The record gives the reactivity of an RNA of 177 nucleotides to 2A3.
RNA sequence: GGGAACGACUCGAGUAGAGUCGAAAAUGGCCGGUGGCCUUGGCGCAGCGGGUUAUUUUGCGUUGCGCUCACACCAGGAAAGCCAAUCAAUCGCGCGCGAGGACCUUGCGGCCAUUGAGGCCGCUAACUUCGGGAGUCCUUUCGAGGACUCCCGAAGAAAAGAAACAACAACAACAAC
Reactivity to 2A3 in 0.01 (KOAc 150mM, MgCl2 10mM, bicine 150mM(pH8.5), 24C), signal-to-noise 1, nucleotides 027 to 126: u100g050g000c020c000g040g050u130g000g000c210c060u010u170g000g040c000g000c020a060g090c020g010g130g030u030u290a210u070u200u090u120g010c000g030u000u070g000c000g050c000u110c000a050c000a000c020c000a000g130g130a050a130a000g010c000c000a000a160u130c070a010a010u130c070g000c000g000c000g060c010g130a050g020g000a050c000c050u000u080g000c000g000g050c000c000a060u010u200g010a120g000g000c000c010g000c000u000a020a070
The reactions ran in a buffer of 150 mM KOAc, 10 mM MgCl2 and 150 mM bicine (pH 8.5), at 24 C.
The 2A3 profile rests on 459 reads.